[RMDB]
RNA sequence: GGGAACGACUCGAGUAGAGUCGAAAAGGUUCAUUUGACAAAGUCUAUGAUAUUGGCAAUCCUAAAGGAAUUCCUAUUGUUGAUGACCCUGUGGUUGAUUGGCAUUAUUUUGAUGCACAGCCCUUGACUAACUUUAAAGGUUCGCCUUUAAAGUUAGAAAAGAAACAACAACAACAAC
Reactivity to 2A3 in 0.01 (KOAc 150mM, MgCl2 10mM, bicine 150mM(pH8.5), 24C), signal-to-noise 3, nucleotides 027 to 126: g000g000u020u030c000a010u040u040u190g010a010c040a030a140a020g010u000c020u070a090u120g080a070u070a050u220u100g020g000c010a010a050u010c010c000u120a120a060a050g050g000a030a090u050u040c000c000u030a070u060u100g030u010u040g030a030u010g030a030c010c000c010u050g050u070g050g050u030u040g040a220u040u140g130g000c020a010u020u020a080u040u240u110u210g020a020u020g000c000a000c010a030g000c020c000c000u010u010g010a010
Reactivity to DMS in 0.01 (KOAc 150mM, MgCl2 10mM, bicine 150mM(pH8.5), 24C), signal-to-noise 7, nucleotides 027 to 126: g010g000u000u000c020a030u000u010u000g030a020c040a070a080a220g000u010c040u000a060u020g010a080u010a080u000u000g000g010c140a060a070u000c020c020u010a060a070a120g010g010a090a110u000u000c020c010u000a110u000u000g010u000u010g000a050u000g010a070c040c010c030u000g020u000g010g010u000u000g000a140u010u000g010g000c010a020u000u000a120u010u010u010u010g010a020u000g020c010a110c040a070g000c020c020c060u000u000g000a300